[RMDB]
RNA sequence: GGGAACGACUCGAGUAGAGUCGAAAACAGGUCCAACAGCUGACGGUUACGUAGGAAGUACUUGCUCAGCUCUCCUUCCUUUAGACCAGGCACAGGUUCCGAGGCCGCAAAAAACUCGCACUGCAUCGCCGUGCCAUAUCUUCGGAUAUGGCACGGCAAAAGAAACAACAACAACAAC
Reactivity to 2A3 in 0.01 (KOAc 150mM, MgCl2 10mM, bicine 150mM(pH8.5), 24C), signal-to-noise 2, nucleotides 027 to 126: c040a010g020g020u040c020c050a120a070c020a080g030c000u080g070a020c000g060g000u060u170a010c050g050u050a070g180g050a110a040g030u050a070c000u220u300g080c020u020c110a000g000c000u020c000u030c000c010u010u090c010c000u030u020u090a010g010a020c000c010a020g020g010c000a030c030a070g000g010u050u000c030c020g020a090g040g000c030c000g000c130a090a000a000a000a020a090c040u060c000g020c010a050c140u070g040c040a060u020c090